[RMDB]
RNA sequence: GGGAACGACUCGAGUAGAGUCGAAAAUGAUCACAGAAAAGCUCUUGGCCAACUAUAUCUUGCCACUUUUUGAUGCACUGACUAUGACAGACAAUCUAAACAAAGUUUUCAAGAAGCUGAUUGACCGUCUCAUACAGAGGUUCGCCUCUGUAUGAGAAAAAGAAACAACAACAACAAC
Reactivity to 2A3 in 0.01 (KOAc 150mM, MgCl2 10mM, bicine 150mM(pH8.5), 24C), signal-to-noise 2, nucleotides 027 to 126: u090g030a060u090c030a010c040a140g130a060a140a000a050g000c010u010c010u100u050g030g000c030c020a060a020c070u080a050u010a040u250c030u010u060g060c020c000a060c040u030u090u060u070u120g070a040u050g000c020a010c060u020g070a020c020u090a090u130g060a050c040a020g030a040c020a030a050u000c000u150a070a020a010c030a010a170a020g000u050u020u070u060c050a060a020g040a010a000g060c050u050g050a090u030u000g050a020c020c000g030
Reactivity to DMS in 0.01 (KOAc 150mM, MgCl2 10mM, bicine 150mM(pH8.5), 24C), signal-to-noise 3, nucleotides 027 to 126: u010g020a100u000c080a120c080a130g010a070a100a120a130g000c050u010c090u010u010g000g000c040c050a080a050c060u020a090u020a080u010c070u000u010g030c140c240a060c080u000u000u000u000u000g010a090u000g010c120a080c050u000g010a090c070u000a080u000g010a060c050a030g010a100c110a040a090u000c060u010a050a050a110c130a000a100a070g010u010u000u000u000c060a060a100g010a070a100g020c080u020g010a090u000u000g010a110c050c060g000